Structure probing data (DMS and 2A3) for a 177-nucleotide construct.

RNA sequence: GGGAACGACUCGAGUAGAGUCGAAAAAAGACACAGGUGACACUGAUCCGGAUUUGGUAGUUGACAAAUCCUCCAUGCCGAGAUUAGUUUCAUUUUGCGUCUUUUGAAUUCGAAUAGUUCAUGUGAUAAAUACUAACACUUUCGAGUGUUAGUAUUUAAAAGAAACAACAACAACAAC
Reactivity to DMS in 0.01 (KOAc 150mM, MgCl2 10mM, bicine 150mM(pH8.5), 24C), signal-to-noise 9, nucleotides 027 to 126: a010a000g000a010c000a030c000a010g010g010u000g000a020c050a010c000u000g000a010u000c000c010g000g000a100u010u000u000g000g010u020a030g020u020u010g010a170c300a090a100a090u020c090c020u000c010c000a010u010g000c010c010g000a150g010a010u000u000a010g010u000u000u000c000a010u000u000u030u010g030c050g000u000c000u000u000u000u000g000a100a120u010u010c050g010a090a110u020a100g010u000u000c080a100u010g010u010g000a160u010
Reactivity to 2A3 in 0.01 (KOAc 150mM, MgCl2 10mM, bicine 150mM(pH8.5), 24C), signal-to-noise 9, nucleotides 027 to 126: a010a000g010a000c010a000c000a010g000g010u000g000a000c000a000c020u000g000a000u000c000c000g050g090a250u040u010u010g030g040u190a030g020u030u130g080a060c080a050a120a060u070c000c000u010c010c000a020u050g020c000c000g280a300g000a140u000u000a000g000u000u000u000c010a010u020u170u270u020g000c000g000u000c000u010u010u010u020g010a010a040u080u060c080g030a070a100u070a180g050u050u070c060a060u140g050u060g160a050u020
2A3 adducts were read by reverse transcription with SuperScript II with manganese.
For DMS the reverse transcriptase was MarathonRT.
Source: RMDB libraries RFM100 and RFMREP, as collected in RNAgym.
Conditions: 150 mM KOAc, 10 mM MgCl2 and 150 mM bicine (pH 8.5), 24 C.